[RMDB]
RNA sequence: GGGAACGACUCGAGUAGAGUCGAAAACACUCCGGGUACGCGCCGCUCAUGCGAUGACGCCUUCAUCGCGUGAGCGGCGUGUACCUGAAGCGGACAUCUUGCCAAACGAAAUGCUGACCGAGAUACCGGAUAAAAGGAUCUUCGGAUCCUUUUAUCCAAAAGAAACAACAACAACAAC
Reactivity to DMS in 0.01 (KOAc 150mM, MgCl2 10mM, bicine 150mM(pH8.5), 24C), signal-to-noise 1, nucleotides 027 to 126: c030a110c100u000c040c000g020g020g000u000a000c030g000c090g170c000c000g190c020u070c000a000u000g020c000g090a040u000g050a000c300g020c200c240u050u000c000a030u060c000g030c000g000u030g040a010g060c000g030g000c000g000u000g000u000a000c000c020u000g000a030a000g060c070g010g030a080c000a050u000c040u000u000g010c030c010a000a010a150c120g000a030a000a250u000g000c010u050g000a070c000c010g000a200g000a040u110a070c100c020
Chemical mapping of a 177-nucleotide RNA with DMS. For DMS, 1,512 sequencing reads were counted. The reactions ran in a buffer of 150 mM KOAc, 10 mM MgCl2 and 150 mM bicine (pH 8.5), at 24 C. For DMS the reverse transcriptase was MarathonRT. Reactivities are given for positions 27 through 126.